The record gives the reactivity of an RNA of 207 nucleotides to 2A3 and DMS. For DMS the reverse transcriptase was MarathonRT.
RNA sequence: GGGAACGACUCGAGUAGAGUCGAAAAGCAGUAUCUCGUUAGGCGAGGCUCCUAUACAAACACAGGUUGCUGAUCUGACGACGUCGAGAGACGCCCAAGAUUUGGACAGGAUAUAUCGAACCAAGGUGAACCUGUCCAGGGUUCGCCCUGGACAGAAACUCUCAAAGCAGUUCGCUGCUUUGAGAGUAAAAGAAACAACAACAACAAC
Reactivity to 2A3 in 0.01 (KOAc 150mM, MgCl2 10mM, bicine 150mM(pH8.5), 24C), signal-to-noise 2, nucleotides 027 to 156: g050c030a020g040u150a090u090c030u000c000g000u030u150a110g040g000c060g040a090g040g000c010u040c030c030u120a160u100a200c110a050a180a010c090a010c010a070g070g000u160u100g020c010u010g010a050u010c010u060g030a020c020g010a030c010g050u000c010g000a020g010a000g000a090c000g010c000c000c000a060a020g130a120u070u100u110g010g010a010c000a040g010g050a040u080a030u050a040u210c090g020a030a010c020c050a070a030g060g030u040g040a030a060c000c000u000g010u040c000c000a000g000g020g000u040u010c130g090c000c000c000u000g000g000a000c000a000g000a010a010
Reactivity to DMS in 0.01 (KOAc 150mM, MgCl2 10mM, bicine 150mM(pH8.5), 24C), signal-to-noise 1, nucleotides 027 to 156: g010c010a090g030u000a060u010c010u000c010g010u000u010a110g030g060c020g010a210g000g040c050u010c010c020u000a060u030a260c050a080a070a080c120a170c110a050g010g000u010u010g020c020u000g020a060u000c030u030g010a120c000g000a020c000g010u000c020g030a300g010a300g060a060c030g000c000c010c040a200a080g000a080u000u000u000g000g020a120c020a060g050g010a120u000a030u010a100u000c060g000a010a120c070c010a030a230g000g050u020g000a040a080c080c000u000g010u000c040c030a050g040g000g050u000u010c120g040c030c010c000u000g070g000a040c010a010g000a030a060

2A3 adducts were read by reverse transcription with SuperScript II with manganese. For DMS, 1,964 sequencing reads were counted. The reactions ran in a buffer of 150 mM KOAc, 10 mM MgCl2 and 150 mM bicine (pH 8.5), at 24 C.